[RMDB]
RNA sequence: GGGAACGACUCGAGUAGAGUCGAAAAUCGUGAGAUGUGGUGCCUCACGCGCUCGAGGCGUCCGUGGUCAGAGAGACCACUGACGCAAAAACUCGAGCGCAAAUAAAAUGCAUUACAUACAGAAUAACCCUAGUAUUAUAUUCGUAUAAUACUAGGGAAAAGAAACAACAACAACAAC
Reactivity to 2A3 in 0.01 (KOAc 150mM, MgCl2 10mM, bicine 150mM(pH8.5), 24C), signal-to-noise 5, nucleotides 027 to 126: u120c030g010u020g050a130g000a060u190g010u010g000g010u010g010c000c000u040c010a040c050g000c000g000c000u000c000g000a000g000g000c000g000u000c000c010g000u010g000g000u000c040a040g110a080g020a010g000a300c010c000a000c000u000g000a000c000g000c000a050a090a060a080a050c000u000c000g000a000g000c000g000c000a010a010a000u130a000a040a000a030u100g010c000a000u010u010a010c000a010u110a060c090a040g240a120a100u150a120a080
Reactivity to DMS in 0.01 (KOAc 150mM, MgCl2 10mM, bicine 150mM(pH8.5), 24C), signal-to-noise 3, nucleotides 027 to 126: u040c080g010u030g000a060g030a030u040g010u000g030g020u010g000c020c040u000c030a060c130g010c000g000c000u000c010g000a040g010g010c030g030u000c000c110g010u000g000g030u000c020a160g010a180g020a220g000a000c010c000a000c020u000g000a010c000g000c010a020a020a090a090a250c020u000c000g000a000g030c020g050c010a000a020a090u010a090a060a090a050u010g000c000a000u000u010a030c000a060u020a070c140a190g000a160a100u030a080a080
Structure probing data (2A3 and DMS) for a 177-nucleotide construct. Reactivities are given for positions 27 through 126. Conditions: 150 mM KOAc, 10 mM MgCl2 and 150 mM bicine (pH 8.5), 24 C. Values are in units of 0.01, from 0 to 300, in steps of 10. For DMS the reverse transcriptase was MarathonRT.